[RMDB]
RNA sequence: GGGAACGACUCGAGUAGAGUCGAAAAGUAAUAGAUAACUGGAUGCAGCGUAGGGGACAACGCAUAUCCAGUACGAAUGGUACCUGUAAAUAAAAUAUGUUUCCUAGUACAAGUACCAACAGAAGGAUAAGCGAUGGUGAUGUCAAUCACAUUUGCACGCAUAAUGGAGGUUCGCCUCCAUUAUGCGAAAAGAAACAACAACAACAAC
Reactivity to DMS in 0.01 (KOAc 150mM, MgCl2 10mM, bicine 150mM(pH8.5), 24C), signal-to-noise 1, nucleotides 027 to 156: g000u020a020a130u000a230g020a150u000a080a020c030u010g020g000a020u000g000c090a130g030c000g030u000a120g050g050g040g000a080c030a080a010c050g040c020a060u000a150u000c000c000a040g020u010a070c010g020a150a120u000g010g010u000a000c010c000u000g040u000a090a160a110u020a110a020a070a150u000a060u000g000u000u000u020c020c050u000a130g000u000a070c030a000a020g000u000a020c000c000a060a210c120a150g050a080a060g000g020a080u000a040a050g010c000g000a070u000g000g020u000g020a040u000g030u000c110a110a110u000c080a070c080a090u000u010u030g060c110a140
Reactivity to 2A3 in 0.01 (KOAc 150mM, MgCl2 10mM, bicine 150mM(pH8.5), 24C), signal-to-noise 6, nucleotides 027 to 156: g040u040a030a160u080a110g140a100u100a150a070c000u010g000g000a000u020g090c120a030g000c130g030u040a030g020g040g000g000a000c010a010a020c030g020c010a010u010a010u160c000c000a000g010u010a010c010g080a060a080u040g000g000u000a000c010c000u010g020u010a000a100a070u150a020a090a070a030u230a080u120g070u030u040u020c020c020u000a010g030u010a000c000a030a000g010u000a010c010c010a000a040c020a040g150a140a030g060g020a040u050a110a030g010c030g050a030u050g050g070u040g010a020u000g090u190c080a070a060u040c000a020c010a060u080u100u180g030c030a020